[RMDB]
RNA sequence: GGGAACGACUCGAGUAGAGUCGAAAAACUAAUCCAAAGCAAGUAUAGGAGAACAGGUUUUUAACUAUUUUUAGGCAGAUAAAAAAUACUAUUUGACAGUCUAACACUAACUGAACAAUAAGUGUUAAAAACUCCCUCCUGUUCGCAGGAGGGAGAACGAGAGACAUUACUUCGGUAAUGUCUCUCGAAAAGAAACAACAACAACAAC
Reactivity to 2A3 in 0.01 (KOAc 150mM, MgCl2 10mM, bicine 150mM(pH8.5), 24C), signal-to-noise 3, nucleotides 027 to 156: a010c040u100a080a040u000c010c020a040a040a040g020c020a040a020g020u090a090u120a110g030g010a030g030a050a020c030a080g040g070u010u040u020u080u090a130a060c040u060a120u150u100u050u090u060a060g040g000c020a020g070a070u170a050a060a020a000a010a040u130a110c040u070a120u180u040u090g050a030c000a000g000u000c000u010a000a000c000a000c000u000a010a000c000u000g070a040a000c010a030a010u020a010a000g000u010g010u010u020a010a070a030a020a030c000u000c010c000c000u000c000c000u000g020u020u060c190g000c030a000g000g000a000g000g000g000a000g000a000a000